Source information: This 207-nucleotide RNA was probed chemically with 2A3. For 2A3 the reverse transcriptase was SuperScript II with manganese. Conditions: 150 mM KOAc, 10 mM MgCl2 and 150 mM bicine (pH 8.5), 24 C.
RNA sequence: GGGAACGACUCGAGUAGAGUCGAAAAGUGCCCUCAUAUAGUAUUUGUGAGAAGAAGUUUUCAAUGUAAGAGGAAGGGUGGAGAAGGAGAGAGAAAUAUGUGAGGUAGUAAGGAGGACAGAAAACAGAACAGAAAAGAGUAACAGCUGAGGUCAAGAGUACGAUCCUAUGUUCGCAUAGGAUCGUACAAAAGAAACAACAACAACAAC
Reactivity to 2A3 in 0.01 (KOAc 150mM, MgCl2 10mM, bicine 150mM(pH8.5), 24C), signal-to-noise 1, nucleotides 027 to 156: g060u080g000c000c290c000u030c020a090u180a030u060a100g180u100a250u110u180u120g110u030g040a040g000a060a000g020a000a030g020u000u000u190u000c090a070a060u170g070u140a140a030g010a000g080g050a040a090g080g040g000u080g000g020a090g020a000a000g060g000a020g000a000g000a000g000a000a070a040u130a050u120g090u030g000a000g070g020u020a020g000u030a120a040g030g030a020g000g020a000c000a030g070a000a060a010a010c020a000g020a030a010c060a020g090a080a110a020a000g070a000g070u060a030a050c000a030g040c070u040g000a000g090g020u030c060a080a030g100a000